[RMDB]
RNA sequence: GGGAACGACUCGAGUAGAGUCGAAAAUCACGUUCACUCUCACACGUGUGAACGUACGUUCUCGUGAUCUCACACGAACGUUCUCUCGUGAGAGUACGAUCGAUCGUUCUCGUGAACUCGAGAGUUCACGAGAGAGUGUUCUCUCGAUCUCGAGUGAUGUUAUAGGGUAGUUCGCUACCCUAUAACAAAAAGAAACAACAACAACAAC
Reactivity to DMS in 0.01 (KOAc 150mM, MgCl2 10mM, bicine 150mM(pH8.5), 24C), signal-to-noise 3, nucleotides 027 to 156: u000c040a130c010g040u000u000c020a030c000u000c020u010c180a170c200a140c120g000u000g010u000g010a020a020c030g000u000a020c090g010u000u000c060u010c020g000u000g000a110u010c060u000c070a110c050a110c050g000a050a070c010g030u000u000c000u000c010u000c040g030u000g010a050g010a050g050u000a050c030g020a120u000c050g000a070u000c060g020u000u000c000u000c040g010u000g010a070a050c010u000c020g020a090g010a100g020u000u000c040a090c000g000a030g000a010g000a060g000u000g000u000u010c020u010c010u000c050g010a080u000c020u000c030g000a070g020u000g010a140
Reactivity to 2A3 in 0.01 (KOAc 150mM, MgCl2 10mM, bicine 150mM(pH8.5), 24C), signal-to-noise 9, nucleotides 027 to 156: u090c020a010c010g010u040u030c030a000c000u000c000u030c030a070c020a040c260g020u020g000u020g060a030a000c010g000u020a020c070g080u110u060c060u030c040g000u020g030a100u060c090u060c080a060c010a010c140g020a050a010c020g020u020u000c020u000c000u010c030g000u010g010a050g000a030g060u100a020c040g030a070u090c040g030a050u040c050g030u030u010c050u020c060g110u180g060a050a020c020u000c030g030a040g000a010g060u130u110c050a020c030g010a020g000a000g000a010g030u150g070u120u010c020u000c000u020c030g020a070u000c010u010c010g000a010g000u030g030a050